Overview: The data come from the RNA Mapping Database (RMDB), library OK2TRN. The record gives the reactivity of an RNA of 177 nucleotides to DMS and 2A3. The reactions ran in a buffer of 150 mM KOAc, 10 mM MgCl2 and 150 mM bicine (pH 8.5), at 24 C. The DMS profile rests on 2,111 reads. DMS adducts were read by reverse transcription with MarathonRT. Values are in units of 0.01, from 0 to 300, in steps of 10.

RNA sequence: GGGAACGACUCGAGUAGAGUCGAAAACUUGAUGCCCCCGGCCUACUGCGCGAGGUGGGCAUUUCAGAUGCUAUUGUAAACAACUUUUUCCUUUCGGGUGGUGAGGCUGGCCAUCACAGGCCGUCGGCCCUAACCCGGUAUUCGUACCGGGUUAGGGAAAAGAAACAACAACAACAAC
Reactivity to DMS in 0.01 (KOAc 150mM, MgCl2 10mM, bicine 150mM(pH8.5), 24C), signal-to-noise 2, nucleotides 027 to 126: c070u000u000g010a030u010g000c020c020c040c030c030g010g010c010c030u020a090c140u020g010c110g010c030g040a090g030g040u000g000g000g030c010a010u000u000u010c130a060g000a150u000g010c060u000a060u000u000g000u010a060a090a100c130a080a080c090u000u000u000u000u010c040c030u000u010u000c080g000g010g020u000g000g000u000g010a080g000g010c030u000g040g020c060c020a010u000c170a100c270a140g010g000c010c040g010u000c060g010g010
Reactivity to 2A3 in 0.01 (KOAc 150mM, MgCl2 10mM, bicine 150mM(pH8.5), 24C), signal-to-noise 2, nucleotides 027 to 126: c010u020u140g020a000u040g020c000c000c010c010c000g000g000c030c020u110a110c080u210g060c170g040c020g100a080g000g150u130g030g030g000c020a010u040u100u080c050a020g030a130u090g040c040u060a120u210u260g140u300a110a090a090c050a080a080c060u030u040u030u100u080c030c000u030u140u060c030g020g040g010u060g000g020u050g020a020g000g060c060u070g040g040c020c000a050u100c040a010c060a020g020g010c010c010g020u070c040g040g030